[RMDB]
RNA sequence: GGGAACGACUCGAGUAGAGUCGAAAAACGAGUCCGUACGCGGACUCGAAGGGCCCCAGAAGACCAAGGGGCCCACACCUACCACUCAUUAGAUGCAUGGAAAUCACUAGGUGAUACGUCACCUAGAACACGCUUUUAAGCUUCGGCUUAAAAGCAAUCUUACCUCUUUCUUCGGAAAGAGGUAAGAAAAAGAAACAACAACAACAAC
Reactivity to 2A3 in 0.01 (KOAc 150mM, MgCl2 10mM, bicine 150mM(pH8.5), 24C), signal-to-noise 2, nucleotides 027 to 156: a020c000g000a000g000u000c000c000g020u010a000c210g010c000g050g000a000c000u020c000g000a000a000g000g000g000c000c000c000c010a070g100a300a140g030a110c060c040a070a050g000g000g000g000c000c000c000a000c000a000c000c000u040a060c010c040a080c030u120c000a130u080u120a090g020a100u100g060c140a100u180g030g110a040a110a150u090c040a060c030u000a000g000g010u000g020a010u040a100c250g030u020c000a000c000c000u010a000g000a000a010c070a030c070g000c000u000u000u020u010a010a000g010c000u010u110c250g160g000c000u010u010a000a000a000a010g000c000a000a000